[RMDB]
RNA sequence: GGGAACGACUCGAGUAGAGUCGAAAACACUGACGACCAACCAUAACGAUGGUCGCACGCGCUCAGCACCAUCAUCGCGAAGAACCCCAGAAAAGCGCCGAUGACGAUGAACUUCUGAAUCGUUCGGUCUGAUCUUAUCUUUCGAGAUAAGAUCAGAAAAAGAAACAACAACAACAAC
Reactivity to DMS in 0.01 (KOAc 150mM, MgCl2 10mM, bicine 150mM(pH8.5), 24C), signal-to-noise 6, nucleotides 027 to 126: c090a100c130u010g020a190c030g010a050c020c020a060a110c090c080a100u000a090a110c210g000a090u000g010g010u000c030g030c050a090c140g030c070g000c040u010c080a060g020c010a050c030c030a040u010c030a050u010c030g010c040g020a110a100g020a070a130c040c000c000c040a130g010a050a070a090a130g010c080g000c100c030g020a070u000g010a100c030g010a040u000g010a180a060c110u000u000c070u010g010a080a030u010c030g030u000u000c030g020g000
Reactivity to 2A3 in 0.01 (KOAc 150mM, MgCl2 10mM, bicine 150mM(pH8.5), 24C), signal-to-noise 5, nucleotides 027 to 126: c050a010c050u090g110a080c020g010a010c010c030a040a080c060c040a130u090a260a030c080g070a070u050g000g000u000c010g000c020a040c050g060c000g010c000u030c060a030g030c030a040c030c000a020u040c000a010u040c020g000c020g030a060a070g030a150a140c010c010c020c020a030g120a050a150a010a020g060c050g000c030c020g060a060u120g030a020c010g020a020u050g040a060a070c020u180u080c050u120g060a060a040u020c020g030u020u030c010g020g030